Chemical mapping of a 177-nucleotide RNA with DMS and 2A3. The reactions ran in a buffer of 150 mM KOAc, 10 mM MgCl2 and 150 mM bicine (pH 8.5), at 24 C. The data come from the RNA Mapping Database (RMDB), libraries RFM100 and RFMREP. The 2A3 profile rests on 1,518 reads. For 2A3 the reverse transcriptase was SuperScript II with manganese.

RNA sequence: GGGAACGACUCGAGUAGAGUCGAAAAAUGGCCGCAGCAUUGCGAGGGCCACCGUGUUCAAGCGCGGGGAGUCAAACGGGCACGACCCGAAACCCGGUGAUCUACGCGUGGGCAAGGUGAAGCAUGGUACACCCGUAUGGUUCGCCAUACGGGUGUAAAAAGAAACAACAACAACAAC
Reactivity to DMS in 0.01 (KOAc 150mM, MgCl2 10mM, bicine 150mM(pH8.5), 24C), signal-to-noise 3, nucleotides 027 to 126: a050u040g020g010c040c000g000c040a230g030c060a160u040u010g040c030g000a260g000g000g000c060c010a010c020c010g020u010g000u010u000c100a090a080g040c020g000c010g010g000g030g000a190g040u020c060a020a110a120c030g000g000g000c220a120c120g000a130c060c050c070g000a050a100a140c030c010c020g000g010u010g020a080u020c010u000a100c030g000c020g010u000g000g000g000c020a010a090g000g010u000g000a080a100g050c050a030u040g000g000
Reactivity to 2A3 in 0.01 (KOAc 150mM, MgCl2 10mM, bicine 150mM(pH8.5), 24C), signal-to-noise 3, nucleotides 027 to 126: a000u050g040g000c050c010g010c030a090g000c130a190u150u270g000c010g070a180g050g000g010c030c000a010c000c000g000u020g020u000u150c070a090a020g020c040g000c000g070g000g020g000a040g060u080c010a010a060a130c060g000g000g030c080a050c200g080a190c000c010c030g000a190a080a060c030c010c000g080g000u130g000a030u040c020u030a010c000g070c000g010u040g000g140g040c010a030a000g060g000u030g030a020a000g060c050a060u100g020g000